An RNA of 177 nucleotides, treated with DMS and 2A3 and read out base by base. The RNA was probed in 150 mM KOAc, 10 mM MgCl2 and 150 mM bicine (pH 8.5) at 24 C. 2A3 adducts were read by reverse transcription with SuperScript II with manganese.
[RMDB]
RNA sequence: GGGAACGACUCGAGUAGAGUCGAAAAAUCGAACUGCGCCAGUUGAUGGAUAAACGCCAAAUCCGGCAACAUUAAAUGCAGCGUGGCAUGGUGCAGGAAUACCGAUGUAUCCAGCCCGGCGCGUAGCACAAGAUAGGGAAUUCGUUCCCUAUCUUGUAAAAGAAACAACAACAACAAC
Reactivity to DMS in 0.01 (KOAc 150mM, MgCl2 10mM, bicine 150mM(pH8.5), 24C), signal-to-noise 9, nucleotides 027 to 126: a050u000c050g010a120a110c050u000g010c010g010c010c020a100g010u010u000g010a080u000g010g000a030u000a040a090a090c090g010c080c070a070a110a070u000c020c010g010g010c010a030a030c040a090u010u010a060a100a090u000g010c030a150g010c150g020u010g010g020c040a050u000g000g010u000g010c010a030g000g010a050a060u010a090c270c080g000a070u010g010u000a060u000c010c020a080g000c050c040c040g010g010c020g010c060g010u000a060g010c190
Reactivity to 2A3 in 0.01 (KOAc 150mM, MgCl2 10mM, bicine 150mM(pH8.5), 24C), signal-to-noise 9, nucleotides 027 to 126: a010u060c010g010a030a040c020u040g000c010g010c010c010a050g010u050u040g070a060u020g010g020a010u050a060a220a030c060g050c060c030a080a090a080u030c030c000g040g020c010a020a010c010a040u210u270a120a130a050u100g000c020a050g110c110g190u160g140g000c040a060u050g010g000u040g000c010a020g020g040a020a030u110a090c050c040g020a020u100g020u070a040u040c010c010a010g030c020c030c010g030g000c020g000c020g050u090a020g060c060